[RMDB]
RNA sequence: GGGAACGACUCGAGUAGAGUCGAAAAUGCGUCGCCUAUUAAAAUGUCUGGCGGCUGUUACAUUUGCUUUCUAGCACUUUUCUAUUCUCGUUUCCUUUUUUUGUACCUUCCCCUUUUGAAUUUUCCAGGUUUAUCAACUGUUCGCAGUUGAUAAACCAAAAGAAACAACAACAACAAC
Reactivity to 2A3 in 0.01 (KOAc 150mM, MgCl2 10mM, bicine 150mM(pH8.5), 24C), signal-to-noise 2, nucleotides 027 to 126: u080g010c010g010u030c000g000c000c000u090a240u220u290a140a170a090a070u190g110u100c120u030g000g000c000g000g000c030u070g040u050u100a040c020a020u050u050u060g020c010u040u140u070c040u150a040g020c010a030c020u020u060u090u000c050u040a100u050u010c030u000c030g020u040u110u000c000c000u040u050u060u000u000u070u090g020u070a060c010c030u030u010c020c000c010c070u000u060u120u180g010a010a060u000u100u100u000c040c030a020